RNA sequence: GGGAACGACUCGAGUAGAGUCGAAAAGAUAUGGAGUCUCUGGGUAUGGAGAGACUGGUCGGAAACGACCAGCUCUCUAUGAAGUACGAGACUCCUAAGUCAAAAGCGGGUCGUUCGCGACCCGCAACUUCAUCUUAAUCUUCGGAUUAAGAUGAAGAAAAGAAACAACAACAACAAC
Reactivity to 2A3 in 0.01 (KOAc 150mM, MgCl2 10mM, bicine 150mM(pH8.5), 24C), signal-to-noise 2, nucleotides 027 to 126: g010a020u090a050u180g010g000a000g000u000c020u020c060u140g300g010g090u210a030u060g070g020a030g010a000g120a280c020u010g000g000u000c010g020g020a070a070a080c000g010a010c010c010a000g020c000u020c010u000c000u020a050u050g040a030a040g060u070a050c080g000a000g000a010c000u010c000c000u000a010a020g030u000c010a000a000a150a030g000c000g000g020g020u030c010g040u050u110c210g000c000g080a010c000c020c000g000c000a000a010
Reactivity to DMS in 0.01 (KOAc 150mM, MgCl2 10mM, bicine 150mM(pH8.5), 24C), signal-to-noise 3, nucleotides 027 to 126: g000a070u000a300u020g000g000a030g040u000c010u000c010u030g030g030g000u000a020u000g000g000a020g010a020g010a130c000u000g000g000u010c010g020g010a100a090a170c020g010a000c000c000a010g000c040u000c000u000c000u010a020u000g000a070a130g010u000a140c200g000a020g010a000c000u000c000c000u000a010a130g010u000c070a100a070a180a140g000c000g010g000g030u000c010g030u000u000c260g020c050g000a020c000c000c000g010c010a000a020